[RMDB]
RNA sequence: GGGAACGACUCGAGUAGAGUCGAAAAACUUUCGCUGAAGGUGUCGUUGCAUUUCUGAUACUGCCCCAAGCUAAGAAGGACUUCUUCAGCUCACACCCCUUGAGAGAGCCGGUCAAUGCAACGGAGGUGCCUGCAAAUAGUUCGCUAUUUGCAGGCAAAAAGAAACAACAACAACAAC
Reactivity to 2A3 in 0.01 (KOAc 150mM, MgCl2 10mM, bicine 150mM(pH8.5), 24C), signal-to-noise 3, nucleotides 027 to 126: a000c020u050u050u130c070g020c090u060g010a030a020g000g060u090g050u060c070g080u080u010g010c030a040u040u050u030c050u070g080a070u060a300c040u070g060c030c010c000c020a010a010g030c060u140a080a040g020a030a040g090g020a230c060u050u030c000u010u010c110a040g000c000u000c000a040c000a000c000c050c000c000u110u210g000a010g000a000g010a010g050c010c000g040g010u070c030a020a020u060g030c020a050a020c010g030g030a060g050g050
Reactivity to DMS in 0.01 (KOAc 150mM, MgCl2 10mM, bicine 150mM(pH8.5), 24C), signal-to-noise 2, nucleotides 027 to 126: a060c130u000u010u010c060g000c050u020g000a090a060g000g020u000g000u010c020g000u030u010g040c040a100u000u000u020c110u030g000a110u070a060c080u000g000c000c000c000c000a150a070g000c100u000a090a060g030a060a090g000g000a060c150u000u010c020u020u000c040a050g000c000u030c080a040c130a140c070c000c000c000u030u000g010a050g010a120g020a080g000c040c000g020g030u000c070a030a060u010g020c010a040a040c010g000g010a140g010g000

The record gives the reactivity of an RNA of 177 nucleotides to 2A3 and DMS. For 2A3 the reverse transcriptase was SuperScript II with manganese. It was measured as part of the RMDB library OK1LIB. Conditions: 150 mM KOAc, 10 mM MgCl2 and 150 mM bicine (pH 8.5), 24 C.